[RMDB]
RNA sequence: GGGAACGACUCGAGUAGAGUCGAAAAGAUAUGGAUGCACCCAAGACAUGAAUACUGUCGGAAACGACAGGUAUUCAACAGCUUGGUGCAUCCUAAGUCAAACUGCGUGAUGUUCGCAUCACGCAGAUCGUAUAGGUGGCUUCGGCCACCUAUACGAAAAAGAAACAACAACAACAAC
Reactivity to DMS in 0.01 (KOAc 150mM, MgCl2 10mM, bicine 150mM(pH8.5), 24C), signal-to-noise 2, nucleotides 027 to 126: g000a020u000a080u010g010g000a010u000g010c010a000c230c080c160a020a010g000a050c130a130u000g020a030a010u010a010c000u000g020u000c000g000g000a040a010a050c000g000a010c000a010g020g020u010a000u000u000c000a080a070c190a180g000c000u020u000g010g000u010g000c000a000u000c000c000u000a000a040g000u000c000a150a170a300c020u000g000c000g010u000g000a000u000g030u000u000c290g020c010a010u000c000a010c000g000c000a000g010a040
Reactivity to 2A3 in 0.01 (KOAc 150mM, MgCl2 10mM, bicine 150mM(pH8.5), 24C), signal-to-noise 2, nucleotides 027 to 126: g000a000u010a000u040g000g020a010u000g010c020a010c040c250c080a020a000g030a000c200a300u170g000a000a000u010a010c000u010g000u010c000g000g020a000a010a010c010g020a010c000a030g060g040u030a000u010u030c000a100a080c170a110g020c000u010u000g000g040u000g010c010a000u000c000c000u000a010a000g010u010c020a050a110a160c010u000g000c000g000u010g010a020u040g060u160u140c300g030c200a010u000c000a020c000g000c000a000g000a000